[RMDB]
Chemical mapping of a 177-nucleotide RNA with DMS and 2A3. For 2A3, 19,484 sequencing reads were counted. The reactions ran in a buffer of 150 mM KOAc, 10 mM MgCl2 and 150 mM bicine (pH 8.5), at 24 C.
RNA sequence: GGGAACGACUCGAGUAGAGUCGAAAACUCACGACGUUCGCGUCGUGAGAAAUAAAUUCACCGGUAAUUCGAGCGCAAAUAUUACCGCUGAUGCGCUCGAAAAAAGGGUAUCCUUCGGGAUACCCAACAGUAAAUAAUGGUUCGCCAUUAUUUACUGAAAAGAAACAACAACAACAAC
Reactivity to DMS in 0.01 (KOAc 150mM, MgCl2 10mM, bicine 150mM(pH8.5), 24C), signal-to-noise 8, nucleotides 027 to 126: c000u000c000a010c000g020a010c000g020u000u010c190g030c010g030u000c000g020u000g000a000g000a010a040a050u000a050a080a190u010u000c030a110c010c010g010g010u010a080a190u000u000c000g010a010g000c010g020c000a020a050a130u010a110u010u010a070c100c090g010c090u000g010a160u000g010c000g010c000u000c000g000a000a010a020a060a060a060g000g010g010u000a000u000c000c000u000u010c200g020g010g000a010u000a000c000c000c000a000a020
Reactivity to 2A3 in 0.01 (KOAc 150mM, MgCl2 10mM, bicine 150mM(pH8.5), 24C), signal-to-noise 9, nucleotides 027 to 126: c000u000c000a000c000g010a000c010g020u060u090c240g000c010g100u000c000g000u010g000a000g000a000a010a000u030a000a040a030u070u040c110a170c260c030g040g100u150a110a130u040u010c010g000a000g000c000g000c010a020a050a060u160a150u230u170a160c040c060g040c120u060g020a030u030g000c010g000c000u010c000g000a000a000a000a010a000a000g000g010g000u000a000u000c000c000u020u040c180g110g000g000a000u000a000c000c000c000a000a010